[RMDB]
Structure probing data (DMS and 2A3) for a 177-nucleotide construct.
RNA sequence: GGGAACGACUCGAGUAGAGUCGAAAAAUCAAUGAGAGAAGUAGUAAGACGACGAUAUUCUCGCGUUUUAAACGAAGGAUUACCAUUACCUGAUUUAAUAAUAGUCGAUGGUGGUAAAGGACAUAUGCUGUCAAAAGGAGUUCGCUCCUUUUGACAGAAAAGAAACAACAACAACAAC
Reactivity to DMS in 0.01 (KOAc 150mM, MgCl2 10mM, bicine 150mM(pH8.5), 24C), signal-to-noise 3, nucleotides 027 to 126: a090u010c060a110a050u000g020a150g000a120g010a100a090g010u010a100g020u010a050a060g020a040c050g020a110c050g010a010u040a190u010u010c070u000c020g010c010g000u000u000u010u000a040a110a090c060g000a070a080g020g000a140u000u000a030c020c010a030u000u010a010c030c000u020g020a020u000u000u010a070a080u010a100a110u010a040g010u000c020g000a040u010g020g030u000g020g000u000a000a060a110g000g000a040c090a060u010a070u000g000
Reactivity to 2A3 in 0.01 (KOAc 150mM, MgCl2 10mM, bicine 150mM(pH8.5), 24C), signal-to-noise 1, nucleotides 027 to 126: a000u070c010a040a130u130g000a040g020a020g050a190a030g040u120a000g050u050a020a030g010a050c050g040a050c010g000a050u050a140u300u150c050u040c000g010c000g010u010u010u040u140a070a100a020c020g020a020a010g130g030a010u010u050a010c000c000a010u000u020a020c000c050u080g050a060u000u110u020a110a080u160a150a070u120a020g020u000c020g020a020u110g000g010u050g010g000u000a040a040a030g050g030a020c000a030u170a050u270g010
Description
The reactions ran in a buffer of 150 mM KOAc, 10 mM MgCl2 and 150 mM bicine (pH 8.5), at 24 C.